[RMDB]
RNA sequence: GGGAACGACUCGAGUAGAGUCGAAAAGUCCUGCCAUGAGACCGCAACGAGAGCAUGUCGCAUCGAAUGGACUCGGGGAGUCGGCAGCUUGCCCCACGGAUGAGCGCCUAAUGCCGGCAUUCAGGAAAAUAGACUGGAUAGUUCGCUAUCCAGUCAACUUAAUGUAAUAGUUCGCUAUUACAUUAAGAAAAGAAACAACAACAACAAC
Reactivity to DMS in 0.01 (KOAc 150mM, MgCl2 10mM, bicine 150mM(pH8.5), 24C), signal-to-noise 3, nucleotides 027 to 156: g000u000c010c020u000g010c070c030a060u000g000a120g010a050c020c100g000c050a100a290c050g010a160g000a290g010c040a080u000g020u000c040g010c020a100u000c060g000a130a250u010g050g000a060c030u010c040g000g010g000g000a080g030u000c000g030g010c010a060g010c060u000u000g000c020c000c010c040a260c080g010g020a150u000g010a050g010c030g010c070c040u000a060a130u000g010c040c050g010g010c030a190u010u000c010a080g010g010a050a050a090a150u010a150g000a030c010u020g010g010a020u010a010g020u000u020c300g060c010u010a020u000c010c010a010g030u010c000a010a050
Reactivity to 2A3 in 0.01 (KOAc 150mM, MgCl2 10mM, bicine 150mM(pH8.5), 24C), signal-to-noise 7, nucleotides 027 to 156: g040u020c000c000u010g050c020c010a100u120g010a020g040a100c020c040g000c080a090a100c100g060a040g020a040g110c050a110u200g090u210c100g010c030a050u020c040g040a040a060u080g020g010a040c030u020c050g020g000g000g010a080g020u020c010g000g000c010a010g010c010u060u090g030c010c000c020c040a060c070g060g000a170u130g020a030g030c020g040c030c100u130a120a050u090g020c010c010g010g000c020a020u100u120c030a030g020g110a020a040a020a090u100a060g000a010c000u000g000g000a000u000a000g020u020u040c140g000c110u000a000u000c000c000a000g000u000c000a000a000

Structure probing data (DMS and 2A3) for a 207-nucleotide construct. For 2A3, 8,424 sequencing reads were counted. Values cover nucleotides 27 to 156.